Source information: Source: RMDB library TTRINS, as collected in RNAgym. Structure probing data (DMS) for a 177-nucleotide construct. Reactivities are given for positions 27 through 126.
[RMDB]
RNA sequence: GGGAACGACUCGAGUAGAGUCGAAAAGAUAUGGAACGUACUACCCACCGAUACCUGAGGGACGAAGACAGCACCUCGGAAACGAGGUGUCGAGUCCCUCAGUGUAUCGAGGUACGUUCCUAAGUCACUUGUUCUCUGAGUUCGCUCAGAGAACAAGAAAAGAAACAACAACAACAAC
Reactivity to DMS in 0.01 (KOAc 150mM, MgCl2 10mM, bicine 150mM(pH8.5), 24C), signal-to-noise 2, nucleotides 027 to 126: g000a090u000a260u010g010g000a020a010c000g010u000a030c050u000a020c000c020c120a300c180c000g000a000u000a000c020c000u000g000a060g010g010g000a000c030g010a030a170g010a040c300a150g000c010a040c000c000u000c000g000g000a040a050a100c040g030a020g000g030u000g000u000c030g000a120g000u000c000c010c000u000c000a000g020u000g040u040a030u000c010g000a060g020g050u000a020c000g000u000u010c000c000u020a010a110g010u030c170a190
The RNA was probed in 150 mM KOAc, 10 mM MgCl2 and 150 mM bicine (pH 8.5) at 24 C.